[RMDB]
RNA sequence: GGGAACGACUCGAGUAGAGUCGAAAAUGACCGGCGUCUGUCCCCCAUGCAGGCGAUGACCCAGGAUGCAGCCAGGGGCCACGACAUGCACGGAGGACCGCAUCCAGCAUGCCCUGGAACGCUGCCUGCAUGGACUCAGCCUCAGCCGCCGCUCCACCAGAAGACGUCUAUUCGUAGACGUCUUCUGAAAAGAAACAACAACAACAAC
Reactivity to 2A3 in 0.01 (KOAc 150mM, MgCl2 10mM, bicine 150mM(pH8.5), 24C), signal-to-noise 1, nucleotides 027 to 156: u080g020a010c010c020g000g040c000g000u010c020u030g070u020c000c040c000c000c000a000u000g000c000a020g000g000c030g190a210u150g030a020c030c000c000a000g040g000a060u110g000c010a000g000c030c000a020g020g000g070g000c060c020a070c040g090a050c000a070u140g110c090a050c180g050g000a090g090g020a190c070c020g040c050a030u030c020c000a000g020c040a110u060g060c000c000c000u020g000g000a030a000c040g070c080u030g000c000c010u020g000c010a000u000g000g000a040c000u010c040a000g080c010c020u040c020a010g050c030c000g000c000c010g040c000u030c020c010a070c030